[RMDB]
RNA sequence: GGGAACGACUCGAGUAGAGUCGAAAAAAGCUACGAGGGGGGACCCCCGAGACGCUGGAGACGCCCGGGAACAAGGAAAUAGAACAAGGUACGGUAGAAAAGAGCGAGCCUCCCGAUACGAGUUUGCAUGCGUAUUCCUUCGGGAAUACGAAAAGAAACAACAACAACAAC
Reactivity to 2A3 in 0.01 (KOAc 150mM, MgCl2 10mM, bicine 150mM(pH8.5), 24C), signal-to-noise 5, nucleotides 027 to 129: a000a000g040c040u040a050c050g020a040g000g000g010g020g000g050a060c000c010c000c000c000g020a030g000a020c060g000c040u050g000g000a020g020a030c050g050c010c010c000g020g010g020a040a010c020a020a020g030g010a050a030a020u110a060g050a070a010c030a060a010g100g000u070a050c040g010g020u070a040g110a050a070a030a000g030a000g030c060g020a000g000c000c010u010c000c000c020g000a030u050a100c020g010a010g040u040u030u090g090c050a040u090g030
Reactivity to DMS in 0.01 (KOAc 150mM, MgCl2 10mM, bicine 150mM(pH8.5), 24C), signal-to-noise 7, nucleotides 027 to 129: a060a060g000c070u030a060c110g000a100g020g000g000g020g020g020a060c030c020c010c030c030g010a120g000a060c120g040c050u040g030g000a080g040a090c180g030c030c020c040g000g050g020a090a040c090a040a070g000g030a050a040a080u050a090g000a080a060c070a090a000g010g050u000a000c080g000g040u000a000g020a060a060a110a070g020a070g030c070g000a010g040c040c020u020c020c020c000g020a060u050a090c110g000a090g020u000u020u010g040c100a050u090g020
Chemical mapping of a 170-nucleotide RNA with 2A3 and DMS. High DMS reactivity at an A or C suggests that its Watson-Crick edge is free. Source: RMDB library 15KLIB, as collected in RNAgym. 2A3 adducts were read by reverse transcription with SuperScript II with manganese. For DMS the reverse transcriptase was MarathonRT. For 2A3, 10,932 sequencing reads were counted.